This 177-nucleotide RNA was probed chemically with DMS. The data come from the RNA Mapping Database (RMDB), library M2PK50. For DMS, 722 sequencing reads were counted. DMS adducts were read by reverse transcription with MarathonRT.
RNA sequence: GGGAACGACUCGAGUAGAGUCGAAAAGGUCUGAUCUUCGGAUCAGACCAACUCUGAUUCCCAAUAGCUGCGUAUCUUGCCUAAGACGGAUAGGCGUUGCCACUCAGGGGGGUUUCGACCCCCCUAAGCCGUCUUAUAUCUUCGGAUAUAAGACGGCAAAAGAAACAACAACAACAAC
Reactivity to DMS in 0.01 (KOAc 150mM, MgCl2 10mM, bicine 150mM(pH8.5), 24C), signal-to-noise 1, nucleotides 027 to 126: g010g000u000c000u000g010a060u000c000u000u020c170g030g000a010u000c030a010g000a000c010c010a010a020c100u000c100u000g010a240u000u000c030c010c000a210a060u000a040g010c030u000g020c040g050u000a050u000c050u000u000g050c030c030u010a150a100g000a120c030g020g010a160u020a040g010g000c000g010u000u000g000c000c020a140c240u000c090a030g000g060g000g000g030g010u000u000u000c100g010a000c000c010c000c000c000c000u000a000a100